Chemical mapping of a 207-nucleotide RNA with 2A3 and DMS. The 2A3 profile rests on 1,621 reads. DMS adducts were read by reverse transcription with MarathonRT. For 2A3 the reverse transcriptase was SuperScript II with manganese. It was measured as part of the RMDB library OK3TST.
[RMDB]
RNA sequence: GGGAACGACUCGAGUAGAGUCGAAAAUUUGAAAACCUAAGUCUGUAAUGAUCACACAGUUCACAAUUCUAAGGUUGUAUUAGAUGUAAGUCUACAUUUUUUCCAGAUUGCCAAUAAAUUCUACCACGUUGAUCAUAAUUCUGAACUCUGUGUUAAAUCACUAGUAACGUUUCGACGUUACUAGUGAAAAAGAAACAACAACAACAAC
Reactivity to 2A3 in 0.01 (KOAc 150mM, MgCl2 10mM, bicine 150mM(pH8.5), 24C), signal-to-noise 3, nucleotides 027 to 156: u160u070u100g030a020a010a020a020c010c010u040a100a010g090u040c060u050g070u100a100a160u090g020a030u050c010a010c010a000c010a060g020u080u040c030a020c030a100a110u080u020c030u170a090a050g020g000u020u020g030u050a100u080u050a030g030a030u040g040u080a070a100g080u010c020u050a020c020a070u040u070u060u040u090u030c030c010a040g020a090u080u050g050c030c010a040a000u050a130a060a030u130u010c040u050a040c000c040a040c080g020u030u030g020a010u000c020a020u060a110a080u130u080c070u020g080a040a040c020u000c060u110g050u050g030u190u170a020a140a040
Reactivity to DMS in 0.01 (KOAc 150mM, MgCl2 10mM, bicine 150mM(pH8.5), 24C), signal-to-noise 2, nucleotides 027 to 156: u000u010u000g000a130a080a080a170c010c000u000a110a130g010u000c020u000g010u010a110a120u000g030a070u000c030a050c030a010c070a090g000u000u000c080a060c070a030a040u000u000c080u010a150a070g010g030u010u010g020u000a120u000u010a040g000a060u010g010u010a100a180g010u000c020u000a090c030a030u000u000u000u000u010u000c040c010a090g030a080u000u000g020c030c040a080a130u040a050a050a050u010u000c020u000a120c020c020a030c100g040u000u000g000a030u000c020a000u000a070a080u000u000c030u020g020a050a070c040u010c080u000g020u010g010u000u010a050a080a210